[RMDB]
RNA sequence: GGGAACGACUCGAGUAGAGUCGAAAACUCCAGCUGAAUCGAAGCGAGUAUCGAUUCAGAGAACUGACUUGAUGCUUUCGCCUAGCACACCUCAAUAGUGUGAUAGCUGGCACAUAAAGUUAUGCACGAUGAUCAGUUCUUUCGAGAAUUGGUCAUCAAAAGAAACAACAACAACAAC
Reactivity to 2A3 in 0.01 (KOAc 150mM, MgCl2 10mM, bicine 150mM(pH8.5), 24C), signal-to-noise 9, nucleotides 027 to 126: c020u000c000c000a020g010c000u010g010a020a030u020c010g010a040a010g120c060g070a050g090u070a070u020c000g000a000u000u000c000a000g010a010g020a070a030c030u020g040a010c000u020u040g030a050u020g090c010u050u110u130c050g000c010c010u010a010g000c000a000c000a010c010c020u150c060a120a130u090a180g020u030g000u000g030a010u030a010g000c010u020g010g030c030a010c000a050u240a020a100a010g050u080u090a100u290g130c090a040c190
Reactivity to DMS in 0.01 (KOAc 150mM, MgCl2 10mM, bicine 150mM(pH8.5), 24C), signal-to-noise 9, nucleotides 027 to 126: c080u010c010c030a140g000c000u000g000a020a020u000c000g000a040a150g010c130g020a150g020u030a060u000c000g010a010u000u000c000a000g000a140g010a100a060c070u010g010a060c080u010u000g000a080u000g000c030u000u020u030c120g010c130c030u000a070g000c000a010c000a000c010c040u000c300a120a110u040a160g000u000g000u000g000a030u000a020g020c030u010g000g000c100a060c110a060u020a090a070a030g000u000u000a040u040g010c180a140c170